[RMDB]
RNA sequence: GGGAACGACUCGAGUAGAGUCGAAAAGGGAUGCUGCGACUGCGACGAGAUCCAGGCCGUGAUGUGGUAAUACAGAACCGACCGGCGGUUCAGCUGAUCACCAAAGCGGCGCCCCACCGGCAGGUGGCACCUAAGUUUUGUUCGCAAAACUUAGGUGAAAAGAAACAACAACAACAAC
Reactivity to DMS in 0.01 (KOAc 150mM, MgCl2 10mM, bicine 150mM(pH8.5), 24C), signal-to-noise 4, nucleotides 027 to 126: g000g010g010a070u000g000c030u020g010c060g010a100c030u010g010c050g000a100c070g000a130g010a080u000c040c030a120g030g010c030c030g020u000g000a140u000g020u000g010g000u010a040a050u000a100c090a120g010a030a040c040c010g010a280c200c140g020g030c030g030g000u000u000c010a060g020c160u000g010a060u000c050a020c030c080a020a090a280g010c010g000g010c030g010c050c040c000c020a030c020c000g000g000c180a100g010g020u000g000g010
Reactivity to 2A3 in 0.01 (KOAc 150mM, MgCl2 10mM, bicine 150mM(pH8.5), 24C), signal-to-noise 3, nucleotides 027 to 126: g040g010g030a030u070g070c010u030g030c040g110a090c100u050g010c040g040a070c050g040a070g010a080u010c040c020a060g060g030c010c010g040u050g020a080u130g040u030g000g020u040a050a010u090a160c080a040g030a020a020c010c000g060a080c050c050g180g110c010g010g000u040u020c000a010g000c050u070g020a040u030c020a010c030c040a040a040a030g020c010g000g010c000g040c010c020c000c000a000c010c010g090g020c030a040g030g010u010g000g030